Chemical mapping of a 207-nucleotide RNA with DMS and 2A3. As a SHAPE reagent, 2A3 marks flexible, mostly unpaired nucleotides at the ribose 2'-OH. Values cover nucleotides 27 to 156. For 2A3, 2,128 sequencing reads were counted. The reactions ran in a buffer of 150 mM KOAc, 10 mM MgCl2 and 150 mM bicine (pH 8.5), at 24 C. The DMS profile rests on 2,809 reads.
[RMDB]
RNA sequence: GGGAACGACUCGAGUAGAGUCGAAAAGACAUUAAUAAUUGGUUUUACUUACUGACUAUGGGCAUUUUAAUACAAGAUUCCAUUUUAAAAGUGUGUACUUGUAGCUUAUUGCAACACAGUGACCAAAGACACCAUAUUCUUACUUCUGGAAUCAAUACACUCCUCAUUAUUUCGAUAAUGAGGAGUGAAAAGAAACAACAACAACAAC
Reactivity to DMS in 0.01 (KOAc 150mM, MgCl2 10mM, bicine 150mM(pH8.5), 24C), signal-to-noise 2, nucleotides 027 to 156: g000a140c040a110u020u010a070a140u000a090a120u000u000g000g000u000u000u000u010a120c060u000u010a050c030u000g020a070c070u000a060u000g040g000g040c060a030u000u000u010u020a030a130u000a070c020a010a040g010a110u000u000c040c000a130u010u000u000u000a020a070a100a040g000u010g010u010g020u000a130c050u020u000g030u000a060g030c060u010u000a050u010u010g030c040a100a100c080a300c080a040g010u000g010a070c020c080a020a080a120g000a120c070a070c050c020a060u000a060u000u000c060u000u000a100c090u000u000c080u010g030g000a030a030u020c020a010a070u000a220
Reactivity to 2A3 in 0.01 (KOAc 150mM, MgCl2 10mM, bicine 150mM(pH8.5), 24C), signal-to-noise 4, nucleotides 027 to 156: g030a000c050a030u110u160a100a110u210a130a100u120u080g030g010u020u030u040u120a050c030u060u070a020c040u040g120a090c030u080a070u100g000g010g010c010a020u040u050u050u300a090a090u150a040c030a050a050g010a050u060u120c010c010a010u000u040u110u260a100a190a070a050g070u080g000u010g010u070a080c010u010u000g020u050a000g010c000u030u030a060u110u220g030c020a050a030c030a040c000a090g020u020g040a010c050c000a060a030a060g030a010c020a040c020c020a020u020a130u220u090c040u080u080a130c030u050u060c030u040g040g030a020a010u160c000a020a000u230a050